Overview: Structure probing data (2A3 and DMS) for a 177-nucleotide construct.
RNA sequence: GGGAACGACUCGAGUAGAGUCGAAAAUAUGUAAGCCAUAUUCAUACCGGAUCGUGUCAUGACUAUGAUACUCAUCAGGAUGGUGCCCACCCGCCCGGCAUGCGCCCGUCACUCUGUACCCUGCACAUCGAUAAAAGUUGUUCGCAACUUUUAUCGAAAAAGAAACAACAACAACAAC
Reactivity to 2A3 in 0.01 (KOAc 150mM, MgCl2 10mM, bicine 150mM(pH8.5), 24C), signal-to-noise 2, nucleotides 027 to 126: u200a040u070g050u100a110a040g090c020c000a020u000a050u100u090c030a020u050a220c020c000g000g010a020u050c040g020u030g010u090c000a000u020g180a200c070u170a040u090g030a010u030a060c040u020c070a040u010c000a020g050g050a030u040g000g050u050g050c020c010c000a040c010c010c010g050c000c000c000g000g000c020a010u060g030c020g000c000c000c000g040u060c010a020c010u000c000u010g030u090a060c010c020c030u050g000c060a050c010a120
Reactivity to DMS in 0.01 (KOAc 150mM, MgCl2 10mM, bicine 150mM(pH8.5), 24C), signal-to-noise 3, nucleotides 027 to 126: u000a030u010g010u010a130a130g010c250c010a030u000a040u010u020c040a070u000a110c030c000g000g010a040u010c180g030u000g000u010c020a020u010g030a090c170u020a080u010g010a040u000a020c040u000c100a010u010c030a080g010g020a080u000g000g010u000g000c040c020c020a080c080c050c040g010c050c060c000g010g000c050a030u010g020c070g010c030c000c080g010u000c050a060c060u010c040u010g010u000a120c020c000c000u010g040c110a070c190a120
Source information:
The reactions ran in a buffer of 150 mM KOAc, 10 mM MgCl2 and 150 mM bicine (pH 8.5), at 24 C.